This 177-nucleotide RNA was probed chemically with DMS and 2A3.
The RNA was probed in 150 mM KOAc, 10 mM MgCl2 and 150 mM bicine (pH 8.5) at 24 C.
For DMS, 2,796 sequencing reads were counted.

RNA sequence: GGGAACGACUCGAGUAGAGUCGAAAACUAGGCAGUGUUCCAGCUCGAGCGGGAUGCACAGAGAACUGGUCACGACCGGGAAGUCCUUGCUCGAGGAUGAAGAGUCAAGGGCUCUGGGACACGUGACGCGCCUAUCUAGCUUCGGCUAGGUAGGCGCAAAAGAAACAACAACAACAAC
Reactivity to DMS in 0.01 (KOAc 150mM, MgCl2 10mM, bicine 150mM(pH8.5), 24C), signal-to-noise 2, nucleotides 027 to 126: c010u000a120g000g000c020a070g060u000g030u000u000c020c010a180g000c000u010c010g010a030g000c030g000g010g020a020u010g000c070a160c300a180g030a220g000a270a180c020u000g000g000u000c030a140c170g000a090c000c030g000g060g000a090a070g000u010c000c000u000u030g000c010u000c000g000a040g020g010a080u030g000a150a090g020a050g000u000c040a140a130g040g020g000c030u000c000u000g000g000g000a000c000a000c000g000u010g000a090c080
Reactivity to 2A3 in 0.01 (KOAc 150mM, MgCl2 10mM, bicine 150mM(pH8.5), 24C), signal-to-noise 3, nucleotides 027 to 126: c010u020a080g070g020c060a060g030u000g000u000u010c000c010a020g000c010u010c010g000a010g000c000g010g040g010a010u060g070c120a020c070a120g160a000g050a180a080c030u020g030g000u010c060a020c100g050a000c010c000g020g010g040a060a020g020u000c000c000u150u300g000c000u000c000g010a010g020g000a050u170g060a030a060g020a010g060u100c120a080a150g160g020g000c000u000c000u000g000g000g010a010c010a000c020g030u020g010a040c070